[RMDB]
RNA sequence: GGGAACGACUCGAGUAGAGUCGAAAAAAAGAGUUCGCCGGAUCGAGCUUGGUAUGGGCCUUGGGACGGUUUAGAAGCGCGCUUGGAUUCGAGUGGAAACAUGCGACGCACUACGUGUGAGCGCAGAAGGUUUGAACGCAUUCGUGCGUUCAAACCUAAAAGAAACAACAACAACAAC
Reactivity to 2A3 in 0.01 (KOAc 150mM, MgCl2 10mM, bicine 150mM(pH8.5), 24C), signal-to-noise 1, nucleotides 027 to 126: a000a000a000g190a000g130u000u000c010g010c120c010g100g000a210u240c020g000a030g000c010u060u140g030g000u140a200u120g010g000g010c000c000u100u020g250g030g000a010c070g000g170u080u110u210a080g020a110a000g000c000g010c010g000c000u050u000g150g000a090u000u040c000g000a010g080u040g000g000a030a030a030c000a070u120g000c000g010a070c070g000c000a000c060u200a030c160g010u000g000u000g000a180g020c020g000c030a000g030a000
About this RNA:
Structure probing data (2A3) for a 177-nucleotide construct. 2A3 adducts were read by reverse transcription with SuperScript II with manganese. The reactions ran in a buffer of 150 mM KOAc, 10 mM MgCl2 and 150 mM bicine (pH 8.5), at 24 C. It was measured as part of the RMDB library OK1LIB.